[RMDB]
RNA sequence: GGGAACGACUCGAGUAGAGUCGAAAACGGGCGUAGAUCUGGAGACAGAUUGAGCGCGCUGUUCGCUGCGCCUAGGUGUUAUCCCUAGGGUGUUAGGCAGUGGAACUGUGACAGCCGUAAGGGAUGACCGGCUAUCUAGCUUCGGCUGGAUAGCCGGAAAAGAAACAACAACAACAAC
Reactivity to 2A3 in 0.01 (KOAc 150mM, MgCl2 10mM, bicine 150mM(pH8.5), 24C), signal-to-noise 2, nucleotides 027 to 126: c000g010g010g000c000g010u020a010g000a000u000c000u000g000g000a020g010a020c000a000g000a020u020u030g000a080g060c030g000c020g050c000u080g010u020u000c010g000c020u010g020c020g090c010c000u000a020g020g050u080g050u240u140a060u100c000c000c000u000a010g020g030g010u050g100u080u090a150g030g000c000a000g000u020g090g140a000a040c000u000g000u050g040a030c030a030g060c000c010g020u010a020a090g080g000g010a080u070g040a020
Reactivity to DMS in 0.01 (KOAc 150mM, MgCl2 10mM, bicine 150mM(pH8.5), 24C), signal-to-noise 3, nucleotides 027 to 126: c030g010g000g000c000g010u000a100g000a000u000c010u000g020g010a160g000a110c000a000g000a000u000u000g020a150g000c030g020c000g000c050u000g030u000u000c010g000c000u000g000c020g020c010c000u000a020g000g000u010g030u030u050a090u050c170c000c000u000a120g000g000g000u000g050u020u050a240g010g020c020a050g000u030g000g000a000a210c030u000g010u000g000a120c110a070g020c000c000g000u060a070a080g000g010g000a060u010g000a140

Chemical mapping of a 177-nucleotide RNA with 2A3 and DMS. The RNA was probed in 150 mM KOAc, 10 mM MgCl2 and 150 mM bicine (pH 8.5) at 24 C. For DMS the reverse transcriptase was MarathonRT. Source: RMDB library OK1LIB, as collected in RNAgym.